Notes: This 177-nucleotide RNA was probed chemically with DMS and 2A3. The RNA was probed in 150 mM KOAc, 10 mM MgCl2 and 150 mM bicine (pH 8.5) at 24 C. 2A3 adducts were read by reverse transcription with SuperScript II with manganese. For DMS the reverse transcriptase was MarathonRT.
RNA sequence: GGGAACGACUCGAGUAGAGUCGAAAAGAUAUGGAUGGAGCUCGUUACGGAGGCGAUCGGAAACGAUCGCUCCCCACCCGUGACGAGCGUUGAAAUCCUAAGUCAAACUAUUGGUUCGCCAAUAGAAUCUAAACAAGAUCUUCGGAUCUUGUUUAGAAAAAGAAACAACAACAACAAC
Reactivity to DMS in 0.01 (KOAc 150mM, MgCl2 10mM, bicine 150mM(pH8.5), 24C), signal-to-noise 4, nucleotides 027 to 126: g000a040u010a270u000g010g010a020u000g010g020a150g030c000u000c000g010u000u000a000c000g000g000a120g020g010c000g000a010u010c000g010g000a080a090a130c000g010a010u000c000g000c000u000c030c000c000c020a300c070c020c010g000u010g000a010c000g010a020g020c000g000u000u010g000a140a100a070u000c000c010u000a040a090g000u010c020a190a070a230c010u010a020u010u000g010g000u000u020c270g010c010c000a010a000u000a020g010a120a130
Reactivity to 2A3 in 0.01 (KOAc 150mM, MgCl2 10mM, bicine 150mM(pH8.5), 24C), signal-to-noise 1, nucleotides 027 to 126: g030a000u060a020u080g000g010a000u010g050g080a070g010c000u010c010g010u020u000a000c000g000g030a000g000g000c010g000a010u000c010g030g000a060a020a020c000g010a010u000c000g000c010u030c010c010c000c000a030c000c000c010g000u000g010a000c000g000a000g000c000g000u050u040g010a110a090a000u000c000c000u020a110a000g040u040c050a070a030a120c030u010a000u030u020g040g040u070u070c300g060c110c000a000a000u000a020g070a040a180